[RMDB]
RNA sequence: GGGAACGACUCGAGUAGAGUCGAAAAGAUAUGGAUCUGUGUAUGGAGCUCCACUCGGAAACGAGUGAAGAGCGAUGAAAUACCAGAUCCUAAGUCAAACUACCUCCUGCUUCGGCAGGAGGUAGAACAUUCACAUUACGUUCGCGUAAUGUGAAUGAAAAGAAACAACAACAACAAC
Reactivity to DMS in 0.01 (KOAc 150mM, MgCl2 10mM, bicine 150mM(pH8.5), 24C), signal-to-noise 4, nucleotides 027 to 126: g000a020u000a130u010g000g000a000u000c000u000g010u020g020u020a010u010g000g000a110g010c000u000c000c000a010c000u000c000g020g000a030a030a080c010g010a010g010u000g010a140a140g020a020g010c000g000a100u010g010a150a110a020u000a000c000c000a010g010a010u000c010c000u000a000a060g000u000c000a140a180a260c000u000a010c000c000u000c000c000u000g010c000u000u020c250g030g010c010a010g010g000a000g000g000u000a000g000a060a160
Reactivity to 2A3 in 0.01 (KOAc 150mM, MgCl2 10mM, bicine 150mM(pH8.5), 24C), signal-to-noise 3, nucleotides 027 to 126: g000a000u020a010u080g000g010a000u000c010u000g080u030g010u150a020u010g100g120a030g020c000u030c010c000a010c000u010c000g000g010a020a010a010c000g000a000g020u020g060a110a100g010a010g000c010g030a220u150g030a020a050a000u010a010c010c000a000g000a000u000c000c000u000a000a010g000u000c020a010a060a140c000u000a000c000c000u000c000c000u000g030c020u050u090c300g210g000c000a000g010g000a000g000g000u000a000g010a000a000
This 177-nucleotide RNA was probed chemically with DMS and 2A3. For 2A3, 12,243 sequencing reads were counted. The data come from the RNA Mapping Database (RMDB), library TTRDES. For 2A3 the reverse transcriptase was SuperScript II with manganese. Values cover nucleotides 27 to 126. DMS adducts were read by reverse transcription with MarathonRT.